[RMDB]
RNA sequence: GGGAACGACUCGAGUAGAGUCGAAAAUUCUUAAAGUUAUGUCUGGAAUUCUUUACAAACUGCUCGAAUGGGAUAUCGGUAAAGAUCCUGUCGAAUAUUCUCAACAAAUUCGUCCACUCAUCGAAAAGAGUUAUCUCUCAUUCGUGAGAGAUAACUCAAAAGAAACAACAACAACAAC
Reactivity to DMS in 0.01 (KOAc 150mM, MgCl2 10mM, bicine 150mM(pH8.5), 24C), signal-to-noise 1, nucleotides 027 to 126: u000u000c020u000u000a080a140a100g000u000u010a110u020g020u000c070u000g010g000a060a060u000u000c020u000u000u000a060c060a070a090a090c090u020g000c060u000c020g010a080a120u020g010g030g000a050u020a000u000c160g000g020u020a060a110a140g000a020u000c030c020u030g020u000c000g000a090a050u000a080u000u000c000u000c040a050a100c120a040a050a180u030u000c030g010u020c020c040a130c120u010c030a090u060c100g000a060a010a090a110
Reactivity to 2A3 in 0.01 (KOAc 150mM, MgCl2 10mM, bicine 150mM(pH8.5), 24C), signal-to-noise 1, nucleotides 027 to 126: u070u050c050u050u100a300a100a090g040u070u090a110u300g090u040c050u010g060g070a060a060u110u020c020u080u040u020a010c030a080a200a080c020u070g000c040u030c000g130a150a060u150g010g010g000a030u040a000u140c050g030g040u090a160a080a000g080a080u010c000c000u010g000u020c000g020a010a040u030a080u220u040c050u000c040a050a150c010a030a160a110u100u050c000g040u030c040c000a080c060u100c020a140u030c140g040a010a060a000a060